[RMDB]
RNA sequence: GGGAACGACUCGAGUAGAGUCGAAAAAACACUGAAUUCAAAUAGUCGCAAACGACGAAACUUACGCUUUAGCCGCUUAAGGCUAGCCGUUGCAGCAGUCGGUCAAUGGGCUGUGUGGUGAAAGCCACCGCAACGUCAUCUUACAUUGACUGGUUUCGAGAUUUCAGAUCUUCGGAUCUGAAAUCUCAAAAGAAACAACAACAACAAC
Reactivity to 2A3 in 0.01 (KOAc 150mM, MgCl2 10mM, bicine 150mM(pH8.5), 24C), signal-to-noise 1, nucleotides 027 to 156: a000a000c150a070c060u120g060a230a090u230u120c100a090a160a060u110a090g000u000c050g190c190a090a200a300c160g050a000c000g000a080a020a000c070u120u200a010c050g000c060u060u300u140a000g000c020c000g080c260u190u270a110a100g020g010c000u000a000g010c010c010g000u000u000g020c020a020g000c000a000g000u000c000g000g040u020c000a000a000u000g000g000g000c030u000g020u040g000u010g000g000u000g040a130a000a030g040c000c000a000c000c010g020c000a020a020c000g170u100c000a170u010c050u140u110a010c000a000u000u000g000a000c010u070g000g000u000u000u000c020